[RMDB]
RNA sequence: GGGAACGACUCGAGUAGAGUCGAAAACGUCGUCGACCCGCGCCGUUCCAGCUUCCACUCUUUCGCUCACACGCACGGCGCCUCCCCCACAGUUCUCCGAUUCCAAUUUUCCGCAAGGAAUGUCAUCUUCUCGAUACGACUUCGGUCGUAUCGAGAAAAAAGAAACAACAACAACAAC
Reactivity to 2A3 in 0.01 (KOAc 150mM, MgCl2 10mM, bicine 150mM(pH8.5), 24C), signal-to-noise 1, nucleotides 027 to 126: c020g000u060c000g020u000c010g030a160c000c060c030g010c020g000c000c020g030u040u120c020c070a000g060c060u070u050c020c030a120c090u090c040u000u130u150c030g000c020u000c010a080c000a000c060g050c000a020c020g010g000c000g060c000c000u000c010c000c000c010c000a010c000a000g000u080u000c040u000c020c000g080a070u100u050c000c040a000a070u020u000u020u000c030c000g050c010a000a000g020g000a110a020u050g030u050c040a160u040c020